[RMDB]
RNA sequence: GGGAACGACUCGAGUAGAGUCGAAAAAGCAGCCCAUAAUUCAGGGCGCUCCAGCCAAAGCUCAUGUUGGGGAUGAUGGAACCCACGUGACCAUCGUACCAGAUGCGGCAGUAUAUCAGGUGCCUGCCACUCCGGUAGCAUUCGUGCUACCGGAGUGAAAAGAAACAACAACAACAAC
Reactivity to DMS in 0.01 (KOAc 150mM, MgCl2 10mM, bicine 150mM(pH8.5), 24C), signal-to-noise 2, nucleotides 027 to 126: a060g030c100a140g020c010c000c010a150u000a100a070u020u010c200a100g040g000g000c030g020c020u000c040c080a150g010c060c040a070a120a160g000c160u000c040a080u000g020u000u000g020g000g000g020a070u010g010a080u000g020g010a190a130c030c030c050a040c100g030u000g010a070c030c010a010u000c040g000u010a130c060c040a100g000a070u010g010c220g000g000c010a080g000u000a070u000a060u010c140a040g000g020u010g030c090c010u020g000c130
Reactivity to 2A3 in 0.01 (KOAc 150mM, MgCl2 10mM, bicine 150mM(pH8.5), 24C), signal-to-noise 1, nucleotides 027 to 126: a000g000c020a020g000c000c060c000a030u150a060a120u140u120c140a110g000g000g010c000g040c010u050c010c010a050g000c000c010a060a050a030g030c000u060c040a050u070g070u150u050g110g010g010g070a080u120g000a060u100g010g090a130a110c000c000c000a030c110g040u090g030a040c020c010a010u010c000g010u020a090c010c010a000g000a050u080g020c040g040g000c010a010g060u080a150u020a020u160c070a010g070g020u010g040c020c010u040g000c010